Overview: An RNA of 177 nucleotides, treated with DMS and 2A3 and read out base by base. High 2A3 reactivity points to a flexible backbone, as in loops and unpaired stretches. For 2A3 the reverse transcriptase was SuperScript II with manganese. The data come from the RNA Mapping Database (RMDB), library M2PK50. For 2A3, 1,732 sequencing reads were counted. DMS (dimethyl sulfate) methylates the pairing face of unpaired adenines and cytosines.
[RMDB]
RNA sequence: GGGAACGACUCGAGUAGAGUCGAAAACUGCUUAACUUCGGUUAAGCAGAAAGUGAUCAAAGCCGAAAGACACCGGCAUGUGACCGGCAGCACAAGCCGAAAAAACGGAUGACUUCGGUCAUCCGAACGUUGAAGGAAACUUCGGUUUCCUUCAACGAAAAGAAACAACAACAACAAC
Reactivity to DMS in 0.01 (KOAc 150mM, MgCl2 10mM, bicine 150mM(pH8.5), 24C), signal-to-noise 2, nucleotides 027 to 126: c000u000g000c010u000u000a010a010c020u000u000c290g010g020u000u000a000a010g010c000a000g020a030a050a060g030u010g020a100u000c080a050a120a170g000c050c020g030a120a050a110g000a080c120a050c160c000g010g030c050a070u000g020u000g000a040c040c010g000g040c030a060g000c020a030c040a030a030g010c020c010g000a000a010a010a050a060a120c010g020g000a020u000g000a000c000u010u020c150g000g000u010c000a000u000c000c000g000a020a020
Reactivity to 2A3 in 0.01 (KOAc 150mM, MgCl2 10mM, bicine 150mM(pH8.5), 24C), signal-to-noise 1, nucleotides 027 to 126: c000u010g000c000u020u000a010a000c000u020u020c060g060g000u000u000a010a010g000c000a000g000a010a010a010g030u040g040a110u100c030a070a120a020g030c030c000g150a080a060a050g100a020c040a020c050c010g020g020c010a050u060g000u030g040a060c040c030g040g000c020a020g010c000a010c040a040a020g020c000c000g190a100a060a000a010a020a000c020g000g000a000u010g000a000c010u030u080c300g040g000u000c010a010u000c010c010g010a020a010